[RMDB]
Annotation
Conditions: 150 mM KOAc, 10 mM MgCl2 and 150 mM bicine (pH 8.5), 24 C. An RNA of 207 nucleotides, treated with 2A3 and DMS and read out base by base. For DMS the reverse transcriptase was MarathonRT.
RNA sequence: GGGAACGACUCGAGUAGAGUCGAAAAGAAAGGUGUUCGCACCUUUCAAAAAGCGUACUACCUUUUGACGUCGUCACAUACGAAUUCUUCCCAAAUAGGAAGAACUAUAUGAAGUCGACGAUAAGGUAUCGCAAAAAGUUCCAGUUCGCUGGAACAACAAUAUCCAGCAGUUCGCUGCUGGAUAUUGAAAAGAAACAACAACAACAAC
Reactivity to 2A3 in 0.01 (KOAc 150mM, MgCl2 10mM, bicine 150mM(pH8.5), 24C), signal-to-noise 6, nucleotides 027 to 156: g000a000a010a000g010g000u030g020u080u160c250g050c120a010c000c000u000u000u010c010a010a010a010a010a000g010c020g040u090a080c050u010a010c030c020u050u050u030u130g280a150c040g000u010c000g010u020c010a010c010a080u020a020c070g160a300a300u000u000c010u010u030c010c020c010a200a300a100u270a090g000g000a000a000g000a000a010c020u050a030u010a010u090g060a170a060g010u020c000g000a010c000g000a010u010a030a000g000g000u000a030u290c010g000c000a000a000a000a130a040g000u000u020c000c000a000g020u040u050c150g020c120u000g000g010a000a000c000a000a000
Reactivity to DMS in 0.01 (KOAc 150mM, MgCl2 10mM, bicine 150mM(pH8.5), 24C), signal-to-noise 3, nucleotides 027 to 156: g010a020a000a010g030g030u000g010u000u020c300g040c000a030c000c000u010u010u000c010a040a070a060a150a210g020c020g010u000a070c110u010a050c000c000u010u010u000u010g010a240c090g030u000c010g010u000c080a300c010a020u000a010c030g000a060a060u000u000c000u000u020c000c010c020a040a100a200u010a070g020g010a030a010g010a010a010c020u000a090u000a000u000g010a100a140g040u000c000g020a020c000g000a070u000a000a010g020g000u000a060u010c020g020c000a060a080a100a140a060g020u000u000c010c000a050g010u000u000c200g040c040u000g000g000a040a060c030a070a100